[RMDB]
RNA sequence: GGGAACGACUCGAGUAGAGUCGAAAAGAAGAGAGUCGACGCAAGCGACGAUAACUGCGGAACGGUAACCGUAGUACCGUAGGGUCAUGGCACGCGAAAGCGAAAGAUCGAAACAUGCCAUAAGAGAGCAUUUAUGCACUUUCGAGUGCAUAAAUGCAAAAGAAACAACAACAACAAC
Reactivity to 2A3 in 0.01 (KOAc 150mM, MgCl2 10mM, bicine 150mM(pH8.5), 24C), signal-to-noise 3, nucleotides 027 to 126: g080a060a010g090a000g040a010g030u040c010g000a080c000g010c130a020a100g070c010g030a020c040g010a040u050a060a050c020u010g000c000g000g030a140a000c040g140g000u110a120a030c040c020g060u080a020g030u010a030c000c000g000u040a060g050g000g000u080c000a020u040g000g010c010a010c040g000c010g040a130a020a000g010c010g050a050a070a050g030a020u080c080g000a000a050a000c070a050u020g010c030c010a040u060a100a020g080a010g010a020
Reactivity to DMS in 0.01 (KOAc 150mM, MgCl2 10mM, bicine 150mM(pH8.5), 24C), signal-to-noise 3, nucleotides 027 to 126: g060a120a070g000a040g040a140g000u020c010g010a120c040g010c180a120a080g000c070g020a010c040g010a120u000a140a060c010u000g000c030g010g000a110a100c090g020g000u020a050a070c050c070g040u030a030g020u010a060c040c010g010u000a030g000g010g000u000c050a100u010g000g000c020a100c070g000c020g000a040a120a150g000c050g030a100a070a130g000a060u010c080g010a230a090a180c110a080u030g040c000c020a010u020a150a140g010a110g010a210